[RMDB]
RNA sequence: GGGAACGACUCGAGUAGAGUCGAAAAAGCGAGAAAGAUGUUCAGGAACAGGUCCGCCCCGCUCUGGCCGCCGCCCACAAUGGUGACGCGUUUACCGGUCAGAUCUGGAUUACGCAGUGCCAUUUCAUGAUUAGGUCCUCUUCGGAGGACCUAAUCAAAAAGAAACAACAACAACAAC
Reactivity to DMS in 0.01 (KOAc 150mM, MgCl2 10mM, bicine 150mM(pH8.5), 24C), signal-to-noise 1, nucleotides 027 to 126: a100g030c070g010a100g000a080a080a080g050a070u010g010u010u000c060a150g020g010a050a050c090a120g010g000u010c080c020g030c040c030c040c020g000c140u010c020u010g000g030c000c020g000c020c050g020c020c030c040a060c210a100a050u000g000g000u000g030a070c120g010c030g020u000u000u000a220c210c000g030g020u000c060a160g000a030u010c010u000g030g020a300u000u010a050c090g000c000a120g060u010g000c000c030a070u000u040u010c160a090